[RMDB]
RNA sequence: GGGAACGACUCGAGUAGAGUCGAAAAGAAUAGGGCGUUUGUAGUGGCAUGUUCUAGACCCGAAGCGGAGUGAUCUACCCAUGGCCAGGGUGAAGCGACGGUAAGACGUCGUGGAGGCCCGAACCCACAUACGUCUUACGUUCGCGUAAGACGUAUGAAAAGAAACAACAACAACAAC
Reactivity to DMS in 0.01 (KOAc 150mM, MgCl2 10mM, bicine 150mM(pH8.5), 24C), signal-to-noise 5, nucleotides 027 to 126: g010a100a110u000a080g000g010g020c060g030u010u010u010g020u010a060g010u010g010g020c050a070u000g010u010u000c030u000a080g000a080c060c030c030g020a090a130g020c080g000g000a100g020u000g000a080u000c040u000a090c030c010c030a070u010g010g020c030c020a250g000g000g020u010g000a230a190g000c020g000a010c020g000g020u010a080a160g010a170c010g010u000c050g010u010g000g000a230g010g000c010c010c020g010a090a100c070c010c150a170
Reactivity to 2A3 in 0.01 (KOAc 150mM, MgCl2 10mM, bicine 150mM(pH8.5), 24C), signal-to-noise 3, nucleotides 027 to 126: g040a020a050u100a050g030g040g040c090g040u070u110u200g100u110a090g040u060g050g000c030a020u040g030u030u010c030u030a050g060a140c020c000c030g030a060a020g040c070g020g030a040g020u030g020a080u020c020u060a040c020c000c020a070u060g040g000c000c050a030g010g010g000u070g000a020a010g000c000g000a010c010g000g000u020a050a040g100a060c010g000u020c040g010u000g000g030a080g090g130c000c000c000g020a030a000c000c000c010a060
Notes
The record gives the reactivity of an RNA of 177 nucleotides to DMS and 2A3. The RNA was probed in 150 mM KOAc, 10 mM MgCl2 and 150 mM bicine (pH 8.5) at 24 C. DMS adducts were read by reverse transcription with MarathonRT.